[RMDB]
Structure probing data (2A3 and DMS) for a 177-nucleotide construct.
For DMS, 4,698 sequencing reads were counted.
High 2A3 reactivity points to a flexible backbone, as in loops and unpaired stretches.
Conditions: 150 mM KOAc, 10 mM MgCl2 and 150 mM bicine (pH 8.5), 24 C.
RNA sequence: GGGAACGACUCGAGUAGAGUCGAAAAGAUAAGUGAGGAAGUAAUUCUUAGCAUUUAUGCGGAAGGCACGUGACAUUUUGGCAAUCGGUGUACACACUAAUUCUCUGUCAAUUGGUGUAAGGGGGUAUCGAAUGUAGCAAUUCGUUGCUACAUUCGAAAAAGAAACAACAACAACAAC
Reactivity to 2A3 in 0.01 (KOAc 150mM, MgCl2 10mM, bicine 150mM(pH8.5), 24C), signal-to-noise 2, nucleotides 027 to 126: g060a030u100a060a040g030u030g050a060g000g040a010a030g060u150a080a100u090u030c020u040u070a030g020c020a060u000u040u190a090u190g090c060g060g060a050a030g040g010c040a000c090g020u030g010a030c050a080u090u120u080u130g030g000c010a040a080u070c060g060g000u050g040u080a020c080a000c010a010c070u030a010a000u070u030c150u010c040u060g040u150c050a030a050u030u060g030g000u020g010u020a040a080g050g010g010g000g030u010a000
Reactivity to DMS in 0.01 (KOAc 150mM, MgCl2 10mM, bicine 150mM(pH8.5), 24C), signal-to-noise 4, nucleotides 027 to 126: g020a090u000a020a060g040u000g010a090g010g010a030a050g010u010a090a110u000u000c020u000u010a160g010c040a030u000u000u010a040u020g020c050g010g000a100a080g010g000c020a030c070g010u000g010a060c070a070u000u000u000u000g010g020c070a060a080u000c060g010g020u010g020u000a090c180a060c020a030c040u000a010a060u000u000c040u010c180u000g000u000c110a030a040u000u000g010g020u010g010u010a070a130g020g010g000g000g000u010a210